Record summary
An RNA of 177 nucleotides, treated with DMS and 2A3 and read out base by base. It was measured as part of the RMDB library OK1LIB. 2A3 adducts were read by reverse transcription with SuperScript II with manganese. For DMS, 16,380 sequencing reads were counted. 2A3 is a SHAPE reagent: it acylates the 2'-hydroxyl of flexible nucleotides of all four kinds. Reactivities are given for positions 27 through 126. DMS adducts were read by reverse transcription with MarathonRT.
[RMDB]
RNA sequence: GGGAACGACUCGAGUAGAGUCGAAAAUUGUCAUGAACUCGUUGAGCCAACGCCUUGCAGAGGUGCCGUUACUGCAGCACGGAUUCUUUGCAGACGACCUAACGCUACUUGCGAGGCACACAGAGAGCCUUACAUCGUUAUUCGUAACGAUGUAAGGAAAAGAAACAACAACAACAAC
Reactivity to DMS in 0.01 (KOAc 150mM, MgCl2 10mM, bicine 150mM(pH8.5), 24C), signal-to-noise 7, nucleotides 027 to 126: u010u020g010u010c050a030u020g020a080a070c050u020c060g000u010u000g010a050g010c110c080a080a130c130g010c020c020u000u010g000c010a010g000a100g000g020u010g020c210c040g000u010u020a060c020u010g010c020a020g020c190a090c140g010g010a110u040u030c080u010u020u010g020c010a020g000a090c080g010a080c140c120u010a050a080c070g020c040u000a110c080u020u010g000c010g010a030g000g030c020a100c160a050c090a090g000a140g010a130g010
Reactivity to 2A3 in 0.01 (KOAc 150mM, MgCl2 10mM, bicine 150mM(pH8.5), 24C), signal-to-noise 9, nucleotides 027 to 126: u130u080g060u070c060a070u140g090a100a070c020u020c050g060u050u100g040a030g060c020c060a090a060c090g000c000c020u030u020g000c010a020g020a060g240g040u040g080c050c010g020u030u060a080c020u030g010c010a020g020c040a020c110g090g030a100u250u060c050u100u140u060g000c010a010g010a100c040g060a060c010c030u050a070a020c030g030c060u100a110c020u100u040g000c000g000a010g010g020c020a010c000a000c010a020g080a000g000a010g060